[RMDB]
RNA sequence: GGGAACGACUCGAGUAGAGUCGAAAACUGCCGCCGCGACGCAGUGAUCCUCGCAGGGUCGCACGGUCGCCUCGGGUCGGCCUCGUGUCGGCUCGACCUGCGAGGGGAGCGAGUGGCGAGCCCGACCAAAACUUUCUCGCCUUCGGGCGAGAAAGAAGCUUAGAAGAGGGUUCGCCCUCUUCUAAGCAAAAGAAACAACAACAACAAC
Reactivity to 2A3 in 0.01 (KOAc 150mM, MgCl2 10mM, bicine 150mM(pH8.5), 24C), signal-to-noise 1, nucleotides 027 to 156: c020u030g030c000c000g000c000c000g020c010g110a280c070g060c030a190g210u000g000a000u040c000c000u000c000g000c000a000g000g070g050u140c070g020c040a040c080g030g000u000c000g000c040c000u000c000g000g000g000u000c010g000g010c000c020u100c150g300u300g000u000c000g020g010c000u000c020g030a090c000c000u000g000c000g000a000g000g000g000g000a000g000c000g000a010g000u040g000g000c020g000a020g020c030c030c000g010a010c000c000a000a060a000a090c010u020u000u010c010u000c000g010c000c030u060u070c140g140g000g000c000g030a000g030a000a000a000g000a000a030

An RNA of 207 nucleotides, treated with 2A3 and read out base by base. The data come from the RNA Mapping Database (RMDB), library M2RFPK. Reactivities are given for positions 27 through 156. Conditions: 150 mM KOAc, 10 mM MgCl2 and 150 mM bicine (pH 8.5), 24 C.